Chemical mapping of a 177-nucleotide RNA with 2A3 and DMS. The data come from the RNA Mapping Database (RMDB), library OK2TRN. 2A3 is a SHAPE reagent: it acylates the 2'-hydroxyl of flexible nucleotides of all four kinds. For DMS, 4,934 sequencing reads were counted. Reactivities are given for positions 27 through 126. The 2A3 profile rests on 2,661 reads. For DMS the reverse transcriptase was MarathonRT. Conditions: 150 mM KOAc, 10 mM MgCl2 and 150 mM bicine (pH 8.5), 24 C.

RNA sequence: GGGAACGACUCGAGUAGAGUCGAAAAAAGAAGCUCGACCGUCUUGGCCGCGACACCGUCGACAUGAUCCAGUUGAUAAAAGAGUUUGACGCCCAGGGUGUGUCCAUCCAGUUUAUUGAUGACGGAACCUUGUAAAGAUGUUCGCAUCUUUACAAGGAAAAGAAACAACAACAACAAC
Reactivity to 2A3 in 0.01 (KOAc 150mM, MgCl2 10mM, bicine 150mM(pH8.5), 24C), signal-to-noise 2, nucleotides 027 to 126: a000a030g110a000a000g050c050u040c040g060a020c010c010g030u030c020u020u050g040g010c040c010g010c030g000a020c010a020c030c030g040u010c010g010a020c000a090u100g030a040u050c050c040a050g030u090u030g090a070u080a110a140a050a020g060a020g000u040u070u040g070a040c040g040c010c000c050a030g030g030g030u060g010u030g020u040c030c000a010u010c000c010a020g020u000u070u080a140u120u120g160a110u140g020a010c050g040g000a020a050
Reactivity to DMS in 0.01 (KOAc 150mM, MgCl2 10mM, bicine 150mM(pH8.5), 24C), signal-to-noise 5, nucleotides 027 to 126: a060a070g000a130a100g020c040u000c050g010a090c060c030g000u010c030u010u010g010g010c060c030g010c100g010a110c050a060c070c040g000u000c030g010a050c060a070u000g010a070u000c110c070a100g000u000u000g020a080u000a060a060a110a120g010a080g000u000u000u000g010a110c130g010c060c010c040a090g020g010g010u010g010u000g000u000c030c040a060u000c040c050a080g000u020u010u010a170u040u010g010a070u000g000a080c050g000g020a130a190